Structure probing data (2A3) for a 207-nucleotide construct. The 2A3 profile rests on 1,281 reads. 2A3 adducts were read by reverse transcription with SuperScript II with manganese.

RNA sequence: GGGAACGACUCGAGUAGAGUCGAAAAAGCCAUACCAUUACGAUGGUAUAGCAAGUCCGUGACGGCGAUGGAUCCCGCCUGGCCGAUGCCGAACUGCCGAUCUGGCUGAUGGUUCCUGCCCCGUCAAAAAACGUAAAGCACUUCGGUGCUUUACGAACUUUCGGAUGAGGUUCGCCUCAUCCGAAAGAAAAGAAACAACAACAACAAC
Reactivity to 2A3 in 0.01 (KOAc 150mM, MgCl2 10mM, bicine 150mM(pH8.5), 24C), signal-to-noise 1, nucleotides 027 to 156: a000g010c000c000a000u010a000c000c000a000u020u100a060c130g080a040u010g000g000u000a000u000a000g000c020a010a060g070u000c020c030g010u080g010a010c000g020g020c110g020a030u080g010g010a010u000c030c010c000g000c000c030u050g010g000c000c020g050a090u110g060c070c080g180a190a110c090u160g030c030c000g020a060u040c030u080g000g020c020u050g030a200u100g020g000u010u010c010c000u030g060c000c000c000c000g000u000c000a000a040a000a160a040a040c000g000u000a010a000a000g000c000a000c020u160u110c250g130g000u000g000c000u000u010u000a000c000g000a000a030
Description: The RNA was probed in 150 mM KOAc, 10 mM MgCl2 and 150 mM bicine (pH 8.5) at 24 C.